[RMDB]
RNA sequence: GGGAACGACUCGAGUAGAGUCGAAAAAGACCAUGAAUUACACAUUUGGUUUGGUUUGGUUUGAUCCCAGUCCAUUUCUUGGCAUGAUUUUAGUGGGACCAGAACCAGAAUGGGAGUGUAAAGUGACUAGAAUUAUCAAAACAUGAGUGAAAUGGGAGAAGGAAGACUGUUUCGACAGUCUUCCUUCAAAAGAAACAACAACAACAAC
Reactivity to DMS in 0.01 (KOAc 150mM, MgCl2 10mM, bicine 150mM(pH8.5), 24C), signal-to-noise 1, nucleotides 027 to 156: a070g010a170c040c020a100u030g000a190a210u000u000a130c030a060c040a300u000u000u000g000g010u000u010u010g030g000u000u010u000g050g060u050u000u000g000a180u000c000c000c000a240g000u000c050c000a080u000u000u010c040u010u010g000g000c040a110u000g000a110u000u010u000u000a030g070u010g050g000g000a080c000c000a030g000a040a180c030c010a080g000a060a130u010g010g020g000a170g020u020g010u010a060a030a080g060u040g020a090c040u010a140g040a070a060u000u030a080u020c120a060a050a090a120c120a060u000g000a050g050u000g000a030a040a030u020g010g030g010a240
Reactivity to 2A3 in 0.01 (KOAc 150mM, MgCl2 10mM, bicine 150mM(pH8.5), 24C), signal-to-noise 1, nucleotides 027 to 156: a000g050a020c000c000a000u020g100a130a060u100u200a010c020a030c020a180u050u040u200g050g000u020u000u010g020g050u000u020u020g060g000u000u040u070g020a010u080c000c000c000a000g060u080c000c000a000u110u000u000c080u140u160g070g060c000a000u020g100a050u050u000u080u040a060g040u110g000g080g100a010c030c030a020g030a100a030c020c000a020g020a120a090u280g110g000g030a030g010u090g010u000a120a140a020g030u030g040a000c020u050a100g030a070a070u130u110a090u260c050a000a000a030a060c020a060u160g010a020g050u040g000a000a000a000u000g010g010g010a140
Structure probing data (DMS and 2A3) for a 207-nucleotide construct.
The 2A3 profile rests on 483 reads.
Conditions: 150 mM KOAc, 10 mM MgCl2 and 150 mM bicine (pH 8.5), 24 C.
Values cover nucleotides 27 to 156.
As a SHAPE reagent, 2A3 marks flexible, mostly unpaired nucleotides at the ribose 2'-OH.
It was measured as part of the RMDB library OK3TST.